Chemical mapping of a 207-nucleotide RNA with 2A3. For 2A3 the reverse transcriptase was SuperScript II with manganese. The data come from the RNA Mapping Database (RMDB), library OK3TST. Values cover nucleotides 27 to 156. The 2A3 profile rests on 1,165 reads. The reactions ran in a buffer of 150 mM KOAc, 10 mM MgCl2 and 150 mM bicine (pH 8.5), at 24 C.
[RMDB]
RNA sequence: GGGAACGACUCGAGUAGAGUCGAAAACAAGGGAGGCUGUUGAUGUAAUUUAUGUAGGUUACCUUUCUGGGGCAGGGGUCAGAAGGGUGGAUCCUUGAUCUGGAGAAGCAAAUAGCACACCAUCCUAAAUUUUUUUUCAUCUAUUUGGCCAGUAUUACCAUAGCAAACUGUUCGCAGUUUGCUAUGGAAAAGAAACAACAACAACAAC
Reactivity to 2A3 in 0.01 (KOAc 150mM, MgCl2 10mM, bicine 150mM(pH8.5), 24C), signal-to-noise 2, nucleotides 027 to 156: c020a050a060g050g000g040a030g050g000c060u040g050u120u080g020a080u020g010u080a120a150u040u130u100a140u110g090u090a040g020g000u050u090a040c000c000u060u070u060c040u030g000g010g020g000c000a010g020g000g000g010u010c000a000g040a050a040g030g020g000u030g000g030a040u020c030c000u050u060g040a030u050c020u030g030g020a030g040a080a000g030c030a060a030a110u050a040g000c020a030c000a000c080c020a050u020c020c000u070a060a070a140u110u020u010u020u020u030u080u080c040a070u000c020u050a100u050u040u050g010g020c000c000a000g000u020a040u060u090a060